[RMDB]
RNA sequence: GGGAACGACUCGAGUAGAGUCGAAAAUUAUUAUUUCGGUGAAAGGCUUAGGCUGCUACUGAUUUGAAAAUAGUCCAUUCUAUGCUUGUAUCCUAAAUAAUGAUAGAGCCUGAGGGUAAUGGUGACAGUUACCAGACAGAUUCGUCUGUCUGGUAACAAAAGAAACAACAACAACAAC
Reactivity to DMS in 0.01 (KOAc 150mM, MgCl2 10mM, bicine 150mM(pH8.5), 24C), signal-to-noise 3, nucleotides 027 to 126: u000u000a030u010u000a040u000u000u000c150g010g000u010g010a130a160a060g000g010c010u000u000a050g010g000c070u000g010c150u010a030c070u010g000a090u020u000u020g000a070a060a070a090u010a030g000u000c300c030a030u000u000c050u000a040u000g000c010u000u000g000u010a190u000c020c020u010a000a030a070u000a020a040u000g000a020u010a060g000a180g030c020c050u000g000a080g000g000g010u000a030a060u000g000g030u000g000a080c160a110
Reactivity to 2A3 in 0.01 (KOAc 150mM, MgCl2 10mM, bicine 150mM(pH8.5), 24C), signal-to-noise 1, nucleotides 027 to 126: u010u000a000u050u000a010u030u020u010c020g000g000u020g030a270a000a000g010g000c000u000u000a030g000g020c010u020g090c030u030a050c040u020g160a160u060u160u200g220a180a090a000a010u020a010g010u000c030c000a000u090u040c000u010a010u030g020c000u030u010g040u080a010u010c010c000u000a020a050a000u080a030a000u020g010a020u050a030g040a030g050c000c000u020g020a070g000g060g040u030a030a090u170g020g000u050g060a010c000a030
This 177-nucleotide RNA was probed chemically with DMS and 2A3. It was measured as part of the RMDB library OK2TRN. Reactivities are given for positions 27 through 126. For 2A3, 904 sequencing reads were counted. Conditions: 150 mM KOAc, 10 mM MgCl2 and 150 mM bicine (pH 8.5), 24 C. The DMS profile rests on 1,814 reads.